[RMDB]
RNA sequence: GGGAACGACUCGAGUAGAGUCGAAAACGGCCUGGCUUCGGCCAGGCCGAAAGAUGCAUUUUACGCCAAGAAAUCCCGGAACAUUGGCGCGGAAGCCUGAGAAAAGAGUACUGUUCGCAGUACUCAACAUUAACAAUCAGUUCGCUGAUUGUUAAUGAAAAGAAACAACAACAACAAC
Reactivity to DMS in 0.01 (KOAc 150mM, MgCl2 10mM, bicine 150mM(pH8.5), 24C), signal-to-noise 7, nucleotides 027 to 126: c020g020g020c010c010u000g010g020c010u000u010c210g030g020c010c010a010g010g020c000c000g000a000a020a050g000a140u010g010c120a080u000u000u000u010a080c030g010c000c010a020a040g000a080a110a100u000c010c010c010g000g010a090a070c120a140u000u000g000g000c000g010c060g000g000a070a070g010c030c060u000g010a120g000a070a080a110a110g000a000g010u000a000c000u000g010u000u010c190g010c000a010g010u000a000c000u000c010a030a090
Reactivity to 2A3 in 0.01 (KOAc 150mM, MgCl2 10mM, bicine 150mM(pH8.5), 24C), signal-to-noise 4, nucleotides 027 to 126: c020g010g020c010c000u020g010g040c020u060u070c170g070g000c020c010a000g010g050c020c010g000a000a000a000g010a010u100g010c010a010u000u030u040u120a030c020g000c000c020a050a000g030a060a110a020u050c040c010c000g020g020a070a020c050a110u020u060g020g000c030g000c030g040g040a050a030g030c010c060u150g050a090g110a110a110a050a030g010a010g010u000a000c000u010g040u040u090c250g010c070a000g000u010a010c000u000c000a000a000
Source: RMDB library M2PK50, as collected in RNAgym.
This 177-nucleotide RNA was probed chemically with DMS and 2A3.
The 2A3 profile rests on 7,847 reads.
For 2A3 the reverse transcriptase was SuperScript II with manganese.
The DMS profile rests on 10,758 reads.
The reactions ran in a buffer of 150 mM KOAc, 10 mM MgCl2 and 150 mM bicine (pH 8.5), at 24 C.